RNA sequence: GGGAACGACUCGAGUAGAGUCGAAAACGCAUGAUGGCGAAGAGCUUCCAGCCCUUCUUGUGAGACUGCGGUCUUACCAAGGGUCCGAGAUCACAAGGAUCGCCGUUCGUCUGAUGCUUCUGACCGCCCGAACUGAAUCGUUCGCGAUUCAGUUCGGAAAAGAAACAACAACAACAAC
Reactivity to 2A3 in 0.01 (KOAc 150mM, MgCl2 10mM, bicine 150mM(pH8.5), 24C), signal-to-noise 2, nucleotides 027 to 126: c050g000c010a020u080g030a060u150g070g000c010g030a010a010g030a030g030c000u090u010c010c010a040g000c000c000c000u050u040c060u070u070g010u020g010a030g030a080c040u050g030c110g050g000u000c030u060u040a130c050c030a110a110g060g000g000u020c040c030g080a030g040a140u130c070a010c050a180a070g020g000a020u030c110g040c010c000g120u040u050c000g000u030c010u060g030a020u010g060c000u120u010c050u130g070a090c030c020g030c000
Reactivity to DMS in 0.01 (KOAc 150mM, MgCl2 10mM, bicine 150mM(pH8.5), 24C), signal-to-noise 2, nucleotides 027 to 126: c180g000c020a010u000g010a080u000g010g020c040g030a020a060g020a090g000c050u000u020c120c080a200g000c020c010c020u000u010c140u010u000g010u000g000a030g000a090c020u000g020c040g010g000u000c000u000u000a110c180c300a050a070g000g010g060u000c030c060g030a100g010a180u010c060a050c130a080a040g000g010a050u010c060g000c020c040g030u000u000c050g000u000c020u000g020a130u000g020c010u000u000c040u000g000a280c050c090g020c150
This 177-nucleotide RNA was probed chemically with 2A3 and DMS. It was measured as part of the RMDB library OK2TRN. For DMS the reverse transcriptase was MarathonRT. The RNA was probed in 150 mM KOAc, 10 mM MgCl2 and 150 mM bicine (pH 8.5) at 24 C.